RNA sequence: GGGAACGACUCGAGUAGAGUCGAAAACAGGGUCUGUGUCUUUUCUGCUUUUAGCCGCAAACCUAGCACAGGGCAUGGCAUCCAUGGCAUGGACUAGGCACUUAGUAAAUGUGAAUGAAUGAAUGAGCGAUAAGUUUUUCUUCGGAAAAACUUAUCGAAAAGAAACAACAACAACAAC
Reactivity to 2A3 in 0.01 (KOAc 150mM, MgCl2 10mM, bicine 150mM(pH8.5), 24C), signal-to-noise 3, nucleotides 027 to 126: c000a020g060g030g060u000c030u040g040u020g030u040c020u000u140u020u030c060u030g040c020u060u110u050u200a030g010c020c020g020c080a110a100a100c050c020u070a070g070c120a070c030a090g000g030g030c020a030u060g020g000c040a020u010c040c010a040u080g000g010c030a020u040g030g050a000c010u010a020g050g020c050a010c020u030u030a020g040u130a090a090a180u140g040u030g160a140a100u080g060a020a070u090g050a090a080u110g040a040g080
Reactivity to DMS in 0.01 (KOAc 150mM, MgCl2 10mM, bicine 150mM(pH8.5), 24C), signal-to-noise 4, nucleotides 027 to 126: c050a120g000g010g010u010c030u000g030u000g000u000c010u000u000u010u010c060u010g020c060u000u000u010u010a100g000c050c040g020c110a070a090a160c080c030u000a070g010c190a060c120a070g000g010g010c030a050u010g010g010c070a060u010c090c060a030u000g010g010c010a070u000g000g010a040c010u000a040g010g000c090a050c080u000u010a040g010u000a030a050a070u010g000u000g000a090a040u000g010a060a060u000g020a080a120u010g020a120g000
Chemical mapping of a 177-nucleotide RNA with 2A3 and DMS. 2A3 adducts were read by reverse transcription with SuperScript II with manganese. It was measured as part of the RMDB library OK2TRN.